[RMDB]
RNA sequence: GGGAACGACUCGAGUAGAGUCGAAAAUUGAACGGAUUCGUCCGUUCAACGCGUGCGAUCCAAACGUAGUACAAAAGUUCAGACGAAAGCACAAGGAUCAAAUGAUACAGCCGUUCGCGGCUGUAAAGUCUACCCAUGGUUUCGACCAUGGGUAGACAAAAGAAACAACAACAACAAC
Reactivity to DMS in 0.01 (KOAc 150mM, MgCl2 10mM, bicine 150mM(pH8.5), 24C), signal-to-noise 1, nucleotides 027 to 126: u000u000g000a010a030c010g010g000a000u000u000c280g000u000c000c010g000u000u000c000a000a030c220g010c030g000u000g010c030g000a060u000c000c050a030a100a070c040g040u010a050g010u000a130c120a080a090a090a070g020u000u000c060a030g010a120c110g010a090a030a070g000c110a080c030a040a140g010g030a060u000c010a050a060a040u000g010a180u000a000c000a030g010c000c000g010u010u000c180g010c030g000g010c010u000g000u000a010a050a070
Reactivity to 2A3 in 0.01 (KOAc 150mM, MgCl2 10mM, bicine 150mM(pH8.5), 24C), signal-to-noise 1, nucleotides 027 to 126: u020u000g000a000a020c000g000g000a010u050u110c160g080u000c020c000g000u010u010c000a000a000c000g010c000g040u020g030c020g000a010u020c000c000a030a000a000c020g050u060a030g120u050a130c030a070a230a060a030g030u040u110c040a040g030a160c050g070a120a010a050g080c030a050c010a130a060g040g030a020u020c020a050a080a040u140g020a030u010a080c030a000g000c010c000g010u040u070c200g010c000g100g000c050u010g000u080a000a000a030